Source: RMDB library OK2TRN, as collected in RNAgym. An RNA of 177 nucleotides, treated with DMS and 2A3 and read out base by base. 2A3 is a SHAPE reagent: it acylates the 2'-hydroxyl of flexible nucleotides of all four kinds.
RNA sequence: GGGAACGACUCGAGUAGAGUCGAAAAGAUCGGCGGGCUGCCCCCAGGCGCUGUCGCAGAGACGCUGGAGCAGCCCCACGUAGGCUUCGAACAUGGUUUCCGGCAGACCUUCGGGGAACAGGCCGAAGGCCGUCGAUUAUUUCGAUAAUCGACGGCCAAAAGAAACAACAACAACAAC
Reactivity to DMS in 0.01 (KOAc 150mM, MgCl2 10mM, bicine 150mM(pH8.5), 24C), signal-to-noise 4, nucleotides 027 to 126: g000a130u000c030g010g020c160g020g010g000c010u000g000c050c020c030c030c210a080g020g000c080g020c020u010g020u010c100g000c220a130g000a120g010a040c030g010c020u000g020g010a270g000c040a020g010c010c000c010c030a010c070g000u010a090g010g000c010u000u000c050g010a040a100c100a110u010g010g000u000u010u000c030c030g000g010c090a050g000a100c050c040u000u000c080g020g000g010g010a050a060c080a070g000g010c010c010g010a070a090
Reactivity to 2A3 in 0.01 (KOAc 150mM, MgCl2 10mM, bicine 150mM(pH8.5), 24C), signal-to-noise 3, nucleotides 027 to 126: g050a080u070c040g050g000c040g010g040g020c020u000g000c020c000c010c030c020a020g090g050c180g020c210u170g040u090c020g010c090a020g030a010g020a220c000g010c100u020g000g000a030g000c000a000g000c010c000c000c040a020c020g050u060a040g020g020c010u020u010c080g030a060a020c040a180u140g110g000u010u020u020c030c000g040g040c050a050g030a190c010c010u120u100c080g000g010g010g020a040a090c020a040g120g010c010c000g030a050a010
For DMS the reverse transcriptase was MarathonRT. The RNA was probed in 150 mM KOAc, 10 mM MgCl2 and 150 mM bicine (pH 8.5) at 24 C.